[RMDB]
RNA sequence: GGGAACGACUCGAGUAGAGUCGAAAAACAUAGGCCAUGCUUACGAGCAUGGCCCAUGACGAAUCUCAAGCAAUCAAGCAUUCUACUUCUAUUGCAACACUGAGGAGCUUACGAGCUCCUCAGUGAAAAAAGAGAGUAAUGUUCGCAUUACUCUCAAGUACUCGUAAAACUUCGGUUUUACGAGUACAAAAGAAACAACAACAACAAC
Reactivity to 2A3 in 0.01 (KOAc 150mM, MgCl2 10mM, bicine 150mM(pH8.5), 24C), signal-to-noise 2, nucleotides 027 to 156: a010c010a020u010a010g000g010c000c000a010u000g000c000u120u060a150c300g100a050g000c000a010u010g010g000c010c000c000a010u010g000a010c070g110a100a150u020c010u010c050a090a000g000c000a030a040u100c010a040a000g000c000a080u130u070c030u120a120c010u020u050c020u080a040u000u070g020c010a070a000c000a030c000u000g000a000g000g000a000g010c000u080u060a080c240g010a010g000c000u020c000c010u000c000a000g000u000g000a010a000a000a000a000a010g000a000g000a000g010u000a000a000u000g020u000u090c150g010c090a000u000u000a000c000u010c000u000c010a000a000